The record gives the reactivity of an RNA of 177 nucleotides to DMS and 2A3. 2A3 adducts were read by reverse transcription with SuperScript II with manganese. For 2A3, 2,379 sequencing reads were counted. As a SHAPE reagent, 2A3 marks flexible, mostly unpaired nucleotides at the ribose 2'-OH.

[RMDB]
RNA sequence: GGGAACGACUCGAGUAGAGUCGAAAAGAUAUGGAGAUGCUCGAUAAGCUCCAGUCGGAAACGACUGCGAGCUUUUGACGAGCUGCCUCCUAAGUCAAAGCACAAAUCUGUUCGCAGAUUUGUGCAACACAGAAGAAGACUUCGGUCUUCUUCUGUGAAAAGAAACAACAACAACAAC
Reactivity to DMS in 0.01 (KOAc 150mM, MgCl2 10mM, bicine 150mM(pH8.5), 24C), signal-to-noise 2, nucleotides 027 to 126: g000a030u000a190u000g010g000a010g000a300u000g000c010u000c000g010a120u000a040a020g010c000u000c010c000a000g010u010c000g010g000a080a050a060c000g010a010c000u000g010c300g000a000g010c000u000u000u000u010g000a210c050g000a020g010c000u000g000c210c010u000c000c000u000a030a110g000u000c010a100a090a170g010c000a010c000a000a010a010u000c000u000g010u000u010c200g020c000a010g000a000u000u000u000g010u010g010c000a030a080
Reactivity to 2A3 in 0.01 (KOAc 150mM, MgCl2 10mM, bicine 150mM(pH8.5), 24C), signal-to-noise 1, nucleotides 027 to 126: g000a000u040a000u070g010g000a010g010a020u050g000c000u000c020g160a280u070a300a080g010c000u000c000c020a000g040u000c010g010g020a110a010a000c020g000a010c010u020g050c030g040a050g000c040u040u040u010u090g040a000c000g000a000g000c010u020g050c000c010u000c010c000u000a050a000g020u000c050a170a070a000g030c000a010c000a020a000a000u000c000u020g070u160u140c300g040c120a000g000a050u020u010u000g000u000g000c010a000a000